[RMDB]
RNA sequence: GGGAACGACUCGAGUAGAGUCGAAAACGAAGGCUUCGGCCUUCGAAAAAAACCUUUGUGGCUUGGGAGAAUACUGUCUGAGGCCCAUUGGGCUCCCCACCAGACAAGAUUCGAAGAACAAGCCACUCUGGUAAAAAUCGUCCGUUCGCGGACGAAACAAAAUAGCUCGUUUCGACGAGCUAUUUUGAAAAGAAACAACAACAACAAC
Reactivity to 2A3 in 0.01 (KOAc 150mM, MgCl2 10mM, bicine 150mM(pH8.5), 24C), signal-to-noise 1, nucleotides 027 to 156: c040g020a010a000g020g010c020u090u180c210g150g000c030c000u000u000c000g020a000a020a000a000a000a000a000c000c000u000u030u010g000u000g000g000c000u000u000g010g010g010a030g010a030a020u040a220c040u010g000u020c000u000g010a070g020g060c030c000c050a290u150u300g000g000g000c010u090c010c020c020c010a030c010c000a010g000a000c010a070a080g040a070u000u000c010g070a230a020g010a030a000c000a000a010g000c000c000a000c000u000c000u000g000g000u060a120a120a030a000a030u010c000g000u020c020c000g020u040u080c300g000c020g090g000a000c000g000a000a000a010